Source information
The data come from the RNA Mapping Database (RMDB), libraries RFM100 and RFMREP. Chemical mapping of a 177-nucleotide RNA with DMS and 2A3. 2A3 adducts were read by reverse transcription with SuperScript II with manganese. DMS adducts were read by reverse transcription with MarathonRT. Conditions: 150 mM KOAc, 10 mM MgCl2 and 150 mM bicine (pH 8.5), 24 C.
RNA sequence: GGGAACGACUCGAGUAGAGUCGAAAACAUGCACACAGAGUGAGAGAGACAUUUCUUGCUGGAGUUAUGACUCUUACCUACUAUAGAUUGUGUUGGCUUCAGCGAGUUAGUUCUUCAUGUGCCUGUCCUGCAUCCACCUGUUCGCAGGUGGAUGCAGAAAAGAAACAACAACAACAAC
Reactivity to DMS in 0.01 (KOAc 150mM, MgCl2 10mM, bicine 150mM(pH8.5), 24C), signal-to-noise 1, nucleotides 027 to 126: c050a060u000g030c040a040c060a090c140a140g030a140g010u060g010a090g010a090g010a060g000a060c010a080u030u010u000c000u000u010g100c030u000g000g000a000g000u000u030a040u030g020a110c040u010c040u000u040a150c100c030u010a100c240u020a110u010a020g010a080u000u000g000u000g040u010u000g000g000c000u020u010c000a010g000c000g010a030g110u000u000a050g000u000u000c000u000u000c020a180u000g000u000g000c040c080u000g020u010c080
Reactivity to 2A3 in 0.01 (KOAc 150mM, MgCl2 10mM, bicine 150mM(pH8.5), 24C), signal-to-noise 3, nucleotides 027 to 126: c000a010u040g000c000a010c000a000c030a050g080a020g130u110g040a100g040a010g000a000g030a050c120a300u030u030u010c000u000u020g000c010u020g000g010a000g000u050u080a140u300g080a050c000u010c020u060u110a060c010c010u040a090c050u150a100u120a250g040a100u050u110g000u010g000u040u000g030g000c000u000u000c000a010g000c000g010a000g010u020u040a010g010u020u030c000u000u000c030a070u070g000u000g020c000c020u020g000u040c000